Annotation:
This 177-nucleotide RNA was probed chemically with DMS. Source: RMDB library OK2TRN, as collected in RNAgym. Conditions: 150 mM KOAc, 10 mM MgCl2 and 150 mM bicine (pH 8.5), 24 C.
RNA sequence: GGGAACGACUCGAGUAGAGUCGAAAAGUGACUGCCAUUGUCAGCUAAGUUAUCUAUUUUCACAGAUCAACAGUUCCAGAAACAAGGUCACAAGAUUCAAAGUCGGAAAAGUGGUAGGUGAAAUGUCGCAUGAGGAAACGUUCGCGUUUCCUCAUGCAAAAGAAACAACAACAACAAC
Reactivity to DMS in 0.01 (KOAc 150mM, MgCl2 10mM, bicine 150mM(pH8.5), 24C), signal-to-noise 1, nucleotides 027 to 126: g010u010g000a050c040u010g010c080c050a090u010u000g020u030c120a090g000c040u020a090a150g020u000u000a040u000c030u000a090u000u000u000u000c090a080c180a020g010a030u000c050a050a080c020a070g020u000u000c030c040a180g010a050a050a060c160a160a130g030g000u000c000a050c090a150a180g000a090u000u010c080a040a100a120g000u000c040g030g000a050a030a050a080g030u000g000g010u000a020g010g000u000g000a030a060a060u020g020u000c120